[RMDB]
RNA sequence: GGGAACGACUCGAGUAGAGUCGAAAAGUGAAAGACCUAGCCACAGGAUUGAUCACCAAAGACAAAGCCUGGAAAAAUUAUCAGGUCUUAUAUUCCGCCACGGGUGCUUUGUCUCUUACGGGAGUUACAAGCAGUUAGCUUUCGAGCUAACUGCUUGAAAAGAAACAACAACAACAAC
Reactivity to DMS in 0.01 (KOAc 150mM, MgCl2 10mM, bicine 150mM(pH8.5), 24C), signal-to-noise 2, nucleotides 027 to 126: g010u020g030a050a040a040g030a030c000c000u000a110g030c300c100a040c070a060g010g000a150u010u010g000a100u020c010a140c070c150a080a080a070g030a000c030a000a010a040g000c020c000u010g070g000a030a070a100a190a100u000u000a070u030c080a060g000g000u000c010u000u000a020u040a070u000u010c020c010g050c120c070a070c190g000g000g000u010g000c000u000u000u000g000u000c000u000c070u020u000a090c150g020g010g000a070g010u040u020a130
Reactivity to 2A3 in 0.01 (KOAc 150mM, MgCl2 10mM, bicine 150mM(pH8.5), 24C), signal-to-noise 2, nucleotides 027 to 126: g170u120g050a040a020a000g020a000c000c000u020a030g060c050c030a050c040a100g000g070a180u020u060g070a020u060c020a030c130c100a150a010a030g040a000c000a000a020a020g080c000c010u020g030g020a090a140a010a060a070u170u110a180u230c050a020g000g000u000c010u000u020a050u010a020u050u050c020c030g030c010c080a070c060g060g000g030u070g040c010u000u030u060g060u010c010u000c000u050u040a050c070g040g010g010a030g040u100u180a060